[RMDB]
About this RNA:
Chemical mapping of a 177-nucleotide RNA with DMS. For DMS the reverse transcriptase was MarathonRT.
RNA sequence: GGGAACGACUCGAGUAGAGUCGAAAAGAUAUGGAGCAUCGAAGGCGCACAGCGAAACUCGGAAACGAGUAGUAGCUGUGAACUACGCUUAGAUGCUCCUAAGUCAAAAGCUGACUUCGGUCAGCAAUCCAUUGCAAAUCUUCGGAUUUGCAAUGGAAAAAGAAACAACAACAACAAC
Reactivity to DMS in 0.01 (KOAc 150mM, MgCl2 10mM, bicine 150mM(pH8.5), 24C), signal-to-noise 2, nucleotides 027 to 126: g000a040u010a300u030g000g000a010g000c080a000u010c000g010a160a240g000g000c000g000c010a000c010a030g000c010g010a090a130a170c010u000c000g000g000a220a180a080c000g000a000g000u000a080g000u000a130g000c000u030g000u000g000a040a030c150u000a300c020g000c000u000u000a300g000a010u000g000c000u000c030c000u010a020a100g000u000c030a070a070a120a100g000c010u000g000a050c000u000u000c250g000g000u000c000a000g000c010a050a100